Chemical mapping of a 177-nucleotide RNA with 2A3 and DMS. The 2A3 profile rests on 16,079 reads. Reactivities are rounded to 0.1 and cut off at 0 and 3. For DMS, 15,879 sequencing reads were counted. Conditions: 150 mM KOAc, 10 mM MgCl2 and 150 mM bicine (pH 8.5), 24 C. The data come from the RNA Mapping Database (RMDB), library M2PK90.
RNA sequence: GGGAACGACUCGAGUAGAGUCGAAAAGUAGUGCUCGAGAGGGAGGCUGUCUCGCAGAGCUUUUAGAUCUUCUGAUCUUUCCCUCCUCCAUAUCGCUUAUGCGACAAGCGAUAGACGCAUAAUUAAACACAUUGUUAUGUUUCGACAUAACAAUGUGAAAAGAAACAACAACAACAAC
Reactivity to 2A3 in 0.01 (KOAc 150mM, MgCl2 10mM, bicine 150mM(pH8.5), 24C), signal-to-noise 8, nucleotides 027 to 126: g010u070a010g090u020g100c040u030c090g070a050g010a030g080g060g010a030g090g020c100u090g140u120c030u010c030g000c040a020g010a030g080c000u000u020u000u020a010g000a000u010c010u260u060c160u300g010a010u000c000u000u010u000c000c000c000u010c010c000u000c010c010a050u020a010u030c010g000c020u060u030a050u270g170c070g090a080c120a050a000g000c010g030a020u010a040g050a030c070g020c070a070u090a170a100u270u170a110a120a010
Reactivity to DMS in 0.01 (KOAc 150mM, MgCl2 10mM, bicine 150mM(pH8.5), 24C), signal-to-noise 9, nucleotides 027 to 126: g020u000a060g020u010g010c030u000c050g000a060g020a200g010g010g010a050g010g020c110u000g010u000c020u000c040g020c100a130g010a200g000c010u000u000u000u000a020g000a010u000c000u010u010c290u010g010a020u000c000u000u000u000c000c000c000u000c020c010u000c010c040a140u000a020u000c000g010c040u000u000a100u000g010c180g010a090c140a040a020g010c020g000a020u000a020g000a100c180g000c090a060u000a060a090u020u000a080a110a170